Overview: An RNA of 177 nucleotides, treated with DMS and 2A3 and read out base by base. Source: RMDB library M2PK50, as collected in RNAgym. The RNA was probed in 150 mM KOAc, 10 mM MgCl2 and 150 mM bicine (pH 8.5) at 24 C. For DMS, 1,932 sequencing reads were counted. The 2A3 profile rests on 1,545 reads.

[RMDB]
RNA sequence: GGGAACGACUCGAGUAGAGUCGAAAAGGGAUCGUCUUCGGACGAUCCCAAAUAAAUUCAGCGGUUUAAAUAAGCUCCGCAUAACCGCUGAUGCGGAGGUUAAAACCCCGCACUUCGGUGCGGGGAAGAGUAAUAUCCUGUUCGCAGGAUAUUACUCAAAAGAAACAACAACAACAAC
Reactivity to DMS in 0.01 (KOAc 150mM, MgCl2 10mM, bicine 150mM(pH8.5), 24C), signal-to-noise 2, nucleotides 027 to 126: g010g000g000a000u000c000g030u000c000u000u020c200g020g040a010c010g010a010u000c000c000c000a000a040a040u010a070a070a140u000u000c000a010g040c000g010g010u000u000u000a040a030a040u010a050a120g000c030u000c000c010g000c000a020u000a060a290c000c010g010c000u000g000a030u000g000c040g010g020a020g010g020u020u000a050a070a100a140c000c000c010c020g050c000a010c000u000u010c130g040g020u000g010c000g030g010g000g000a010a000
Reactivity to 2A3 in 0.01 (KOAc 150mM, MgCl2 10mM, bicine 150mM(pH8.5), 24C), signal-to-noise 2, nucleotides 027 to 126: g000g000g000a010u030c000g010u020c050u050u070c220g000g020a010c010g000a000u000c020c000c000a020a000a000u000a000a000a000u100u050c000a010g000c010g130g040u130u300u300a040a130a080u190a120a050g030c020u010c030c000g030c010a000u000a080a060c000c000g000c020u000g000a010u000g010c020g000g010a010g030g030u070u140a030a050a090a110c000c000c010c000g050c010a010c010u060u070c210g120g050u000g000c000g070g000g000g010a000a010